[RMDB]
Chemical mapping of a 177-nucleotide RNA with DMS and 2A3. DMS (dimethyl sulfate) methylates the pairing face of unpaired adenines and cytosines. Conditions: 150 mM KOAc, 10 mM MgCl2 and 150 mM bicine (pH 8.5), 24 C. For DMS the reverse transcriptase was MarathonRT. For DMS, 18,869 sequencing reads were counted.

RNA sequence: GGGAACGACUCGAGUAGAGUCGAAAAGAUAUGGAGGAUACAUGGAGCCUACAAUCGGAAACGAUUGACAGGCUAUGAAGUGUGAUCCUCCUAAGUCAAAAGAACGGCAGGUUCGCCUGCCGUUCAAGAUAAUCAUGUAGUUCGCUACAUGAUUAUCAAAAGAAACAACAACAACAAC
Reactivity to DMS in 0.01 (KOAc 150mM, MgCl2 10mM, bicine 150mM(pH8.5), 24C), signal-to-noise 7, nucleotides 027 to 126: g000a020u000a060u020g000g000a030g010g000a030u000a010c010a010u010g010g000a040g020c000c000u000a150c000a010a000u010c000g010g010a020a010a030c000g010a010u000u000g000a130c220a020g010g010c000u000a100u010g010a150a250g000u000g000u000g010a050u000c000c000u000c000c000u000a000a050g000u010c010a110a100a170a150g000a010a010c000g000g000c000a010g000g010u000u020c300g010c010c000u010g000c000c000g000u000u000c010a040a080
Reactivity to 2A3 in 0.01 (KOAc 150mM, MgCl2 10mM, bicine 150mM(pH8.5), 24C), signal-to-noise 4, nucleotides 027 to 126: g010a000u010a000u050g000g000a010g010g000a000u010a080c010a010u020g030g060a030g020c000c000u010a010c010a010a010u010c000g000g000a000a000a000c000g000a000u000u040g080a130c060a030g020g000c000u070a300u120g020a010a000g010u000g000u070g050a060u030c000c000u000c000c000u000a000a000g000u000c000a000a000a040a160g000a000a000c000g010g000c000a000g030g020u090u260c300g180c090c000u000g000c020c000g000u000u000c000a000a000